[RMDB]
RNA sequence: GGGAACGACUCGAGUAGAGUCGAAAACCCGGCGGUAAAUCAACUCAGUUGAAAGCCGCGAGCGCUUUGGGUGCGAACUCAAAGGACAGCAGAUCCGGUGUAAUUCCGGGGCCGACGGUUAGAGUCCAAAAGAGGUUAUCGUUCGCGAUAACCUCAAGAUAAAUGACUAGUUCGCUAGUCAUUUAUCAAAAGAAACAACAACAACAAC
Reactivity to 2A3 in 0.01 (KOAc 150mM, MgCl2 10mM, bicine 150mM(pH8.5), 24C), signal-to-noise 2, nucleotides 027 to 156: c000c000c050g050g000c020g000g000u110a240a230a120u030c000a030a000c050u130c300a170g000u010u030g020a070a080a020g030c000c000g030c030g010a020g010c020g000c020u000u000u000g010g000g000u050g040c050g020a090a010c010u020c020a030a010a000g050g070a060c050a060g030c000a020g050a110u030c000c010g020g000u020g020u030a050a060u090u020c000c000g000g000g000g220c220c030g090a050c020g010g200u240u080a090g020a080g110u080c030c140a020a130a010a120g000a010g000g000u010u000a000u000c000g010u030u040c240g040c010g090a000u000a000a020c000c010u000c000a000a000
Reactivity to DMS in 0.01 (KOAc 150mM, MgCl2 10mM, bicine 150mM(pH8.5), 24C), signal-to-noise 1, nucleotides 027 to 156: c000c020c010g010g040c030g000g010u010a030a150a220u000c010a000a090c040u000c100a150g000u010u010g010a040a160a300g010c000c010g050c020g000a170g010c010g000c010u000u000u000g010g000g000u000g010c250g000a180a060c000u000c020a020a080a070g040g010a100c020a120g000c030a060g010a120u010c000c020g000g010u010g010u010a220a300u000u000c010c000g010g020g000g020c040c040g000a110c080g000g010u000u000a100g010a220g010u000c030c020a030a050a100a170g010a030g020g040u000u000a000u000c000g050u000u000c300g010c080g000a000u000a020a010c000c000u000c040a000a060